Background: This 207-nucleotide RNA was probed chemically with DMS and 2A3. Source: RMDB library OK3TST, as collected in RNAgym. Conditions: 150 mM KOAc, 10 mM MgCl2 and 150 mM bicine (pH 8.5), 24 C. In probing experiments dimethyl sulfate is read out at A N1 and C N3, which are open when not base-paired. For DMS the reverse transcriptase was MarathonRT.
[RMDB]
RNA sequence: GGGAACGACUCGAGUAGAGUCGAAAACUGUCUGAGGAUGUGGUCUUGCCUUUGAUAGGGCAAAGUUAUUUGUAAACAUUGCUUUAAAUAAAAACAUGUAAAGGUGUUUUUGAUGGUUAACAAAAACUAUGAGUAUAAUAGAGCCUAGUCCCUAUUAGGAGGAUAGUAUAUUCGUAUACUAUCCUCCAAAAGAAACAACAACAACAAC
Reactivity to DMS in 0.01 (KOAc 150mM, MgCl2 10mM, bicine 150mM(pH8.5), 24C), signal-to-noise 2, nucleotides 027 to 156: c010u010g010u000c020u010g030a140g010g030a070u000g040u000g040g010u000c040u010u000g050c000c010u000u000u000g010a180u000a190g010g010g010c020a030a050a110g010u000u010a090u010u000u000g030u000a110a090a070c040a060u000u000g020c060u010u000u000a050a080a120u020a020a030a030a020a040c010a010u000g010u010a120a100a240g020g090u000g000u000u000u000u000u000g000a110u010g000g000u000u010a080a100c030a020a020a040a020a050c060u000a080u000g000a120g020u000a070u020a050a080u000a090g010a170g030c010c040u010a180g000u000c000c000c010u010a100u010u000a190
Reactivity to 2A3 in 0.01 (KOAc 150mM, MgCl2 10mM, bicine 150mM(pH8.5), 24C), signal-to-noise 3, nucleotides 027 to 156: c030u030g040u020c020u050g010a030g010g010a020u040g000u030g080g070u010c010u000u010g010c020c000u070u030u110g090a110u110a090g010g000g050c020a050a030a030g000u030u050a130u070u160u090g080u070a040a030a010c000a030u020u090g030c010u120u100u100a070a120a020u170a090a040a040a020a000c020a010u090g060u190a030a070a100g110g000u000g000u000u000u010u040u060g060a050u060g000g020u030u050a060a020c020a010a040a000a010a000c010u030a070u160g020a010g070u080a030u030a170a040u070a030g020a000g010c000c000u020a030g010u010c010c020c000u150a090u300u170a020